This 177-nucleotide RNA was probed chemically with DMS. Conditions: 150 mM KOAc, 10 mM MgCl2 and 150 mM bicine (pH 8.5), 24 C. For DMS the reverse transcriptase was MarathonRT. Source: RMDB library OK2TRN, as collected in RNAgym. Reactivities are given for positions 27 through 126.
RNA sequence: GGGAACGACUCGAGUAGAGUCGAAAAGGGACAAGAAUUCCUCUCCACGAUUAGUGUGGUCUGGUUAUGAAUCAAGUUUAGUUAUGAACACUGUCCCCCAACUAAAUAACCAUGAAGACAACAUUCCUGCCGAUAAUUGAUUCGUCAAUUAUCGGCAAAAAGAAACAACAACAACAAC
Reactivity to DMS in 0.01 (KOAc 150mM, MgCl2 10mM, bicine 150mM(pH8.5), 24C), signal-to-noise 2, nucleotides 027 to 126: g030g010g000a040c070a080a110g030a150a290u000u000c030c000u000c050u000c000c010a000c080g050a120u000u010a150g010u010g010u000g010g000u000c010u010g000g010u000u020a030u000g050a100a150u000c240a070a250g000u010u010u010a130g030u000u000a140u010g000a090a070c050a200c170u020g010u000c020c010c000c040c080a060a130c050u000a020a090a070u000a050a030c080c050a080u000g030a030a010g000a040c130a010a070c080a090u000u000c090c080